[RMDB]
RNA sequence: GGGAACGACUCGAGUAGAGUCGAAAAUCCAGGAGAGGAAGUGGUAGGAUGCAGCUGCCGGUUCAUGGAUACCUCUGCAGUGCAUGUCGUAGGCUUGCACUUGCAUGGGUUUGCAUGACCCGGGAGAAGUAGGUGAUUACUUCGGUAAUCACCUACUAAAAGAAACAACAACAACAAC
Reactivity to DMS in 0.01 (KOAc 150mM, MgCl2 10mM, bicine 150mM(pH8.5), 24C), signal-to-noise 3, nucleotides 027 to 126: u020c020c010a120g010g010a100g010a070g010g000a050a070g010u010g000g020u010a060g030g000a070u010g010c090a130g000c010u000g000c010c000g010g000u000u010c000a010u000g000g000a020u000a010c000c000u000c210u000g000c010a010g020u000g000c000a010u000g000u010c020g010u040a110g010g010c000u000u000g010c000a000c000u010u010g050c000a010u000g000g000g000u000u010u000g000c000a010u010g000a010c030c000c000g000g000g000a050g000a090
Reactivity to 2A3 in 0.01 (KOAc 150mM, MgCl2 10mM, bicine 150mM(pH8.5), 24C), signal-to-noise 4, nucleotides 027 to 126: u020c000c000a030g040g040a080g010a030g050g020a130a090g040u070g070g040u090a050g020g040a070u060g030c030a020g010c010u050g110c010c000g000g000u010u000c000a000u000g090g090a010u030a030c000c000u020c000u000g000c000a000g000u010g000c000a000u020g030u090c100g170u170a090g060g020c000u010u010g010c010a000c010u080u160g000c010a010u000g000g000g000u000u010u030g070c000a000u000g000a000c000c000c000g000g020g000a030g000a030
An RNA of 177 nucleotides, treated with DMS and 2A3 and read out base by base.
Values cover nucleotides 27 to 126.
The RNA was probed in 150 mM KOAc, 10 mM MgCl2 and 150 mM bicine (pH 8.5) at 24 C.
For 2A3 the reverse transcriptase was SuperScript II with manganese.